[RMDB]
The data come from the RNA Mapping Database (RMDB), library RNAMAK.
The record gives the reactivity of an RNA of 207 nucleotides to 2A3 and DMS.
For 2A3 the reverse transcriptase was SuperScript II with manganese.
Reactivities are given for positions 27 through 156.
The 2A3 profile rests on 2,420 reads.
The reactions ran in a buffer of 150 mM KOAc, 10 mM MgCl2 and 150 mM bicine (pH 8.5), at 24 C.
RNA sequence: GGGAACGACUCGAGUAGAGUCGAAAAUUGACUUCGGUCAAAGGUACGCGUACUACGGACCAGUGCAGCUCACCCGAAGAACUGCGUCCCAAAUAGGACGCAGGGAGGGUGAGAACUACUGCAUGGUCCGUAUCGCAUUAAUUAGGUUCGCCUAAAAGAUAACUUCAUCUUUCGAGAUGAAGUUAUCAAAAGAAACAACAACAACAAC
Reactivity to 2A3 in 0.01 (KOAc 150mM, MgCl2 10mM, bicine 150mM(pH8.5), 24C), signal-to-noise 4, nucleotides 027 to 156: u080u060g020a030c030u040u040c300g110g000u020c010a060a080a060g150g060u180a080c110g020c020g020u040a100c040u010a010c040g000g000a010c030c010a120g260u040g040c000a000g000c010u010c000a000c000c000c020g060a190a030g010a070a000c000u000g000c000g010u000c000c020c030a140a300a070u300a080g010g000a000c000g020c000a000g010g010g010a020g000g000g000u020g000a000g000a000a000c020u230a020c020u000g000c000a010u010g000g000u000c000c000g000u000a000u010c010g000c010a020u020u220a100a190u090u060a060g010g080u050u060c240g090c100c040u070a100a080a030a080
Reactivity to DMS in 0.01 (KOAc 150mM, MgCl2 10mM, bicine 150mM(pH8.5), 24C), signal-to-noise 2, nucleotides 027 to 156: u000u010g010a010c010u000u010c270g030g050u000c000a040a050a120g010g040u000a070c040g000c030g040u000a050c080u000a030c000g030g010a050c020c010a070g050u010g040c000a000g000c000u000c020a030c000c000c000g000a120a200g020a140a180c000u000g010c000g010u000c000c020c010a100a140a220u000a040g010g020a020c000g030c000a000g000g000g000a220g000g020g020u000g000a020g000a020a050c060u000a300c000u000g000c000a100u000g000g010u000c000c000g010u000a000u000c000g020c020a140u000u000a030a130u010u000a050g030g010u000u020c090g050c030c000u000a020a080a110a230